[RMDB]
RNA sequence: GGGAACGACUCGAGUAGAGUCGAAAAAGCAGCGAGACCUGCAACGAAAGAGGUAAGGAAAGAUUGAGAGAAUUUGUUGAGAAGUUAACUGCAGGACAAAUUAGAUUCGCAAAGAAGAAAAAGAAUGGAUCAUGCAAGCAUUCGUGCUUGCAUGAUCAAAAGAAACAACAACAACAAC
Reactivity to 2A3 in 0.01 (KOAc 150mM, MgCl2 10mM, bicine 150mM(pH8.5), 24C), signal-to-noise 2, nucleotides 027 to 126: a050g070c150a000g060c000g020a060g010a000c010c010u010g040c000a120a200c060g120a020a040a120g080a070g090g000u110a000a100g100g000a070a000a010g050a110u050u210g000a000g030a000g030a070a010u050u000u030g000u000u140g080a140g060a240a150g000u090u040a000a090c050u000g000c000a080g000g120a000c160a000a040a050u080u050a070g020a300u000u000c000g000c040a050a110a000g140a070a000g010a000a090a030a000a000g060a070a090u180g060
Reactivity to DMS in 0.01 (KOAc 150mM, MgCl2 10mM, bicine 150mM(pH8.5), 24C), signal-to-noise 2, nucleotides 027 to 126: a060g040c030a060g000c030g030a160g010a150c140c020u010g000c000a150a110c180g020a040a130a040g040a050g000g000u060a020a010g000g020a060a030a000g010a050u000u000g000a210g000a130g010a030a030u020u000u030g000u000u010g000a110g000a100a110g000u000u040a030a150c100u060g050c010a070g000g000a180c100a030a050a030u010u000a050g000a100u010u000c030g010c060a040a100a060g000a110a090g070a030a070a080a060a080g000a100a010u000g000